[RMDB]
The record gives the reactivity of an RNA of 177 nucleotides to 2A3 and DMS. Values cover nucleotides 27 to 126. For 2A3, 1,308 sequencing reads were counted.
RNA sequence: GGGAACGACUCGAGUAGAGUCGAAAACAAGUACGAGAAAGCGAUCGCCGCACGGGCAAUGUCAAAUCUGUACCAAGAGGCCGCGCUUGAUGUGACGCACCAACAUCACAAUCAUGCUCGUUGGGCGUCCCUCUCCCUCUUUCGAGAGGGAGAGGGAAAAAGAAACAACAACAACAAC
Reactivity to 2A3 in 0.01 (KOAc 150mM, MgCl2 10mM, bicine 150mM(pH8.5), 24C), signal-to-noise 2, nucleotides 027 to 126: c010a030a060g130u180a040c060g060a020g080a180a050a000g000c010g120a140u110c070g000c060c000g070c070a020c010g020g010g030c040a020a050u070g050u210c080a080a050a180u090c070u020g030u030a300c000c000a080a060g050a040g140g000c000c050g010c040g000c000u020u050g010a060u060g100u040g010a020c020g020c070a180c100c040a050a020c010a020u060c030a040c080a080a180u130c050a020u150g030c020u050c100g030u010u030g020g000g000c010g000
Reactivity to DMS in 0.01 (KOAc 150mM, MgCl2 10mM, bicine 150mM(pH8.5), 24C), signal-to-noise 2, nucleotides 027 to 126: c080a100a150g010u000a040c070g000a090g030a150a060a060g020c030g020a150u000c200g020c000c050g020c090a100c300g000g020g000c040a030a030u000g000u000c240a090a170a060u040c130u000g000u000a070c020c040a100a180g000a130g010g040c050c160g010c030g000c050u000u000g000a080u000g000u000g000a050c020g000c020a080c050c070a060a120c030a050u010c070a080c090a060a030u010c150a050u000g000c040u000c060g010u000u000g010g010g030c020g000
The RNA was probed in 150 mM KOAc, 10 mM MgCl2 and 150 mM bicine (pH 8.5) at 24 C. DMS adducts were read by reverse transcription with MarathonRT. Source: RMDB library OK2TST, as collected in RNAgym.